The record gives the reactivity of an RNA of 207 nucleotides to 2A3 and DMS. Reactivities are given for positions 27 through 156.
RNA sequence: GGGAACGACUCGAGUAGAGUCGAAAAAGGCACUUCGCAAUGUGUGCUCAAACAUUGCUUAUUCAAACACGCUUCACAAUGUGCGACAAAGAAACAUUGUAAUAAGAGCUAAUGUUUUAACAUUGGCAAAACCGAGUUAGCUUCGGCUAACUCGGAACGCCAUAUAAAACUUCGGUUUUAUAUGGCGAAAAGAAACAACAACAACAAC
Reactivity to 2A3 in 0.01 (KOAc 150mM, MgCl2 10mM, bicine 150mM(pH8.5), 24C), signal-to-noise 9, nucleotides 027 to 156: a000g160g000c010a000c010u010u020c020g000c000a000a000u000g010u000g010u020g020c110u110c230a040a040a000c000a000u000u010g000c020u090u140a230u160u160c110a050a090a040c080a010c070g000c000u020u010c010a000c000a010a010u000g000u000g010c010g060a060c140a080a180a030g090a020a050a000c000a000u000u020g010u020a000a070u140a070a020g080a010g010c000u010a000a000u010g030u010u160u070u200a110a020c000a010u000u000g000g000c010a000a070a010a040c000c000g000a000g000u000u000a000g010c010u040u030c230g020g000c000u000a000a000c000u000c000g000g000a000a000
Reactivity to DMS in 0.01 (KOAc 150mM, MgCl2 10mM, bicine 150mM(pH8.5), 24C), signal-to-noise 2, nucleotides 027 to 156: a120g020g020c080a030c030u000u020c170g040c070a020a020u010g010u000g040u020g020c010u000c140a140a120a050c060a020u000u000g000c030u000u010a080u010u010c140a100a070a190c150a060c030g020c020u000u000c060a090c060a060a040u020g040u040g000c040g000a190c090a070a100a120g010a090a040a030c010a020u000u010g050u000a150a110u010a120a090g020a220g030c020u000a010a020u000g050u000u000u020u010a090a010c010a000u000u010g010g000c000a000a030a110a120c010c020g020a000g000u000u000a010g010c000u010u010c300g050g000c010u000a010a010c000u000c010g000g020a010a010

Notes
The 2A3 profile rests on 17,050 reads. It was measured as part of the RMDB library M2RFPK. The reactions ran in a buffer of 150 mM KOAc, 10 mM MgCl2 and 150 mM bicine (pH 8.5), at 24 C. The DMS profile rests on 3,078 reads.